[RMDB]
RNA sequence: GGGAACGACUCGAGUAGAGUCGAAAACUAGCUGAUACCGGCCGGGGUGUCCGGCUUAUUGCUUGGCGUGCGUGCGUCCUGGGCGUCUGGAAGCAUGCUCGUGUGCAACGAGAGAUUUAUGACGGUGCACCGCGCACCUUUUCGAAGGUGCGCGGUGAAAAGAAACAACAACAACAAC
Reactivity to 2A3 in 0.01 (KOAc 150mM, MgCl2 10mM, bicine 150mM(pH8.5), 24C), signal-to-noise 2, nucleotides 027 to 126: c010u000a000g020c020u040g060a070u010a190c040c000g080g000c010c000g000g130g000g110u200g030u050c020c040g030g010c010u030u050a030u000u080g010c010u050u120g160g000c010g000u040g020c020g000u000g000c000g040u010c000c000u090g160g000g000c090g030u070c000u000g010g000a020a020g000c000a010u070g000c000u000c050g030u080g000u080g070c030a060a030c050g040a000g000a000g020a090u090u160u150a150u230g180a060c020g010g060u060g000